[RMDB]
RNA sequence: GGGAACGACUCGAGUAGAGUCGAAAAUGACUCGGAGAUACGAGCAAGUAUUAAGCAGAACGAGAUAAGACCAUCUUGAUAGGUCAAGAUACAGACUGAACCUCAUAAGACUCGAGGAGAGUUCAUGGAGCAAGUACGAUUUCGAUCGUACUUGCUCAAAAGAAACAACAACAACAAC
Reactivity to DMS in 0.01 (KOAc 150mM, MgCl2 10mM, bicine 150mM(pH8.5), 24C), signal-to-noise 2, nucleotides 027 to 126: u020g010a020c060u000c010g020g020a250g030a130u000a050c030g000a040g050c170a130a180g030u000a040u000u020a100a200g020c070a120g010a090a170c100g030a050g020a020u000a150a130g000a070c130c080a020u000c010u010u000g020a080u000a150g000g020u030c040a020a040g010a050u010a090c130a090g030a120c050u000g000a040a160c110c000u000c030a070u000a070a060g010a010c000u010c010g020a040g000g000a080g000a150g030u000u000c000a050u010g000
Reactivity to 2A3 in 0.01 (KOAc 150mM, MgCl2 10mM, bicine 150mM(pH8.5), 24C), signal-to-noise 2, nucleotides 027 to 126: u080g030a040c000u000c020g040g010a100g010a030u070a090c060g010a090g070c050a070a050g010u030a030u130u070a100a060g070c050a010g050a150a010c070g020a010g030a100u070a130a040g040a050c030c020a030u060c030u090u020g050a050u090a070g200g040u050c010a000a000g030a010u120a040c070a020g070a010c000u010g040a070a060c020c000u020c000a020u000a170a000g090a030c000u000c000g000a020g000g050a170g010a020g030u070u000c030a030u140g190